Chemical mapping of a 177-nucleotide RNA with 2A3 and DMS. Source: RMDB library OK1LIB, as collected in RNAgym. The RNA was probed in 150 mM KOAc, 10 mM MgCl2 and 150 mM bicine (pH 8.5) at 24 C. Reactivities are given for positions 27 through 126. For 2A3 the reverse transcriptase was SuperScript II with manganese.
RNA sequence: GGGAACGACUCGAGUAGAGUCGAAAAUCGGGAUACUGAUGCCAUGUUCAAUUAGUCCUCGUAAAAUGCCAAUAGCGAGUUCAUCGUUAAUAGCGAAGAUUGCAGUGGCAGAUUGAACCAUGAUGUCAUCAACCUAGCUCUUCGGAGCUAGGUUGAUAAAAGAAACAACAACAACAAC
Reactivity to 2A3 in 0.01 (KOAc 150mM, MgCl2 10mM, bicine 150mM(pH8.5), 24C), signal-to-noise 4, nucleotides 027 to 126: u150c040g020g050g030a100u100a200c060u090g030a030u070g000c070c000a020u080g010u030u040c010a000a010u020u020a060g120u080c030c030u030c050g030u070a020a050a080a030u190g000c030c020a050a100u070a060g020c020g000a020g040u130u080c050a080u020c050g050u050u040a090a050u100a300g000c030g040a030a030g040a120u070u060g000c050a030g070u050g010g000c010a010g000a030u070u050g030a060a010c000c000a010u060g000a040u070g130u110c000
Reactivity to DMS in 0.01 (KOAc 150mM, MgCl2 10mM, bicine 150mM(pH8.5), 24C), signal-to-noise 2, nucleotides 027 to 126: u090c130g000g000g040a150u000a080c170u000g000a040u000g030c030c000a050u040g000u010u000c010a010a000u040u000a100g020u010c040c060u020c170g000u020a040a010a090a130u000g030c010c010a180a070u000a090g010c000g040a020g000u020u030c190a050u010c000g000u000u000a060a010u040a140g000c000g000a030a040g000a140u000u000g000c000a070g000u010g000g040c000a080g000a050u000u000g010a040a020c170c060a000u040g060a050u030g010u000c040